This 177-nucleotide RNA was probed chemically with DMS and 2A3. Values cover nucleotides 27 to 126. The DMS profile rests on 4,480 reads. It was measured as part of the RMDB library M2PK50. The reactions ran in a buffer of 150 mM KOAc, 10 mM MgCl2 and 150 mM bicine (pH 8.5), at 24 C.

[RMDB]
RNA sequence: GGGAACGACUCGAGUAGAGUCGAAAAGACCUUCAGUUCGCUGAAGGUCGAUGAUGGUAAGAGAGAUUACCAUCUGUUAAGUGAUAUGGAUAAGUUCUCUCAGUGAACGUGCUUUCGAGCACGUUAAUCAUUGAGUGUCGUUCGCGACACUCAAUGAAAAAGAAACAACAACAACAAC
Reactivity to DMS in 0.01 (KOAc 150mM, MgCl2 10mM, bicine 150mM(pH8.5), 24C), signal-to-noise 4, nucleotides 027 to 126: g010a000c000c000u000u000c000a010g010u000u020c220g020c010u000g000a020a000g000g010u000c000g010a030u000g000a030u000g000g010u000a030a080g000a080g000a080g000a100u010u010a010c000c010a010u000c000u000g010u000u010a080a110g010u000g010a120u010a110u010g010g010a130u010a070a100g020u000u000c020u000c000u000c020a200g000u010g000a030a010c000g020u000g000c010u000u000u020c200g000a010g020c010a010c000g010u000u000a020a110
Reactivity to 2A3 in 0.01 (KOAc 150mM, MgCl2 10mM, bicine 150mM(pH8.5), 24C), signal-to-noise 4, nucleotides 027 to 126: g000a000c000c000u000u030c010a020g010u020u100c120g030c110u000g010a010a000g000g000u000c000g000a000u010g000a000u000g010g020u050a130a020g060a000g020a010g000a070u020u070a010c000c000a010u020c040u040g070u070u180a140a110g110u060g190a100u110a100u300g140g070a090u070a210a070g050u040u000c000u000c000u000c050a020g040u020g200a040a000c010g000u010g000c010u140u100u140c300g040a010g000c010a000c020g000u000u010a010a020